This 207-nucleotide RNA was probed chemically with 2A3. The data come from the RNA Mapping Database (RMDB), library OK3TST.

[RMDB]
RNA sequence: GGGAACGACUCGAGUAGAGUCGAAAACGAUCUGUUCGCAGAUCGAGCUACGGAGACGUAGCGAAGCGAUCCGGUCCUCGGUGGAUCGCGCUACUUGAGAUAUAACCAGAUCCGCCACUCCUGGGAUCUGGCCGAGGACGUAGAGAGAGGAGUGGGACAUAUCGCGUGCAUUCGUGCACGCGAUAUGAAAAGAAACAACAACAACAAC
Reactivity to 2A3 in 0.01 (KOAc 150mM, MgCl2 10mM, bicine 150mM(pH8.5), 24C), signal-to-noise 1, nucleotides 027 to 156: c010g000a000u000c000u010g040u030u130c270g030c140a000g000a010u000c000g000a050g010c000u000a000c010g030g010a060g020a060c000g020u010a000g000c020g000a110a000g000c000g010a000u000c000c010g020g030u020c010c010u030c020g030g030u050g030g000a010u010c000g000c010g050c010u150a100c030u070u170g080a050g030a110u110a030u050a090a060c000c000a000g000a000u000c000c010g060c060c030a050c040u050c040c020u040g070g020g010a010u000c000u000g000g000c000c010g000a000g000g000a010c030g030u060a050g020a030g010a010g000a000g080g000a000g000u020g000g000g020a000

Conditions: 150 mM KOAc, 10 mM MgCl2 and 150 mM bicine (pH 8.5), 24 C.